[RMDB]
RNA sequence: GGGAACGACUCGAGUAGAGUCGAAAACAGCGUGAGGCUGGCUUCACAGAGCAGCGACAACUGCCCGCUUCCAACGGUGGAAGGAUAAUGGGCCGCUGCACUCCUAGGACCAAUUGGGCCUCGCAGCGUUAUGUCACAAGUUCGCUUGUGACAUAACAAAAGAAACAACAACAACAAC
Reactivity to DMS in 0.01 (KOAc 150mM, MgCl2 10mM, bicine 150mM(pH8.5), 24C), signal-to-noise 4, nucleotides 027 to 126: c080a140g020c040g020u010g010a030g000g010c000u010g020g010c120u000u000c040a090c270a100g000a070g010c010a030g010c010g000a160c160a080a120c290u010g000c000c000c020g020c030u000u000c000c000a050a160c300g010g010u000g020g000a020a030g010g040a100u000a050a080u010g010g010g010c010c020g010c000u000g000c020a060c030u000c050c030u020a300g000g000a050c010c010a170a190u020u010g000g010g000c010c000u000c020g010c030a090g040c090
Reactivity to 2A3 in 0.01 (KOAc 150mM, MgCl2 10mM, bicine 150mM(pH8.5), 24C), signal-to-noise 5, nucleotides 027 to 126: c020a000g050c030g030u020g010a000g020g000c060u070g010g040c090u090u030c020a040c010a030g020a000g000c010a000g000c000g050a030c080a260a060c120u060g000c010c000c000g020c000u010u000c010c030a180a120c200g300g210u150g050g000a010a010g030g030a080u090a190a070u210g010g000g000c000c010g000c010u000g000c010a050c010u020c000c010u050a070g010g010a030c010c010a030a080u210u220g130g040g000c020c010u010c000g000c010a020g010c010

This 177-nucleotide RNA was probed chemically with DMS and 2A3. The reactions ran in a buffer of 150 mM KOAc, 10 mM MgCl2 and 150 mM bicine (pH 8.5), at 24 C. It was measured as part of the RMDB library RFMREP. The 2A3 profile rests on 8,000 reads. Values cover nucleotides 27 to 126.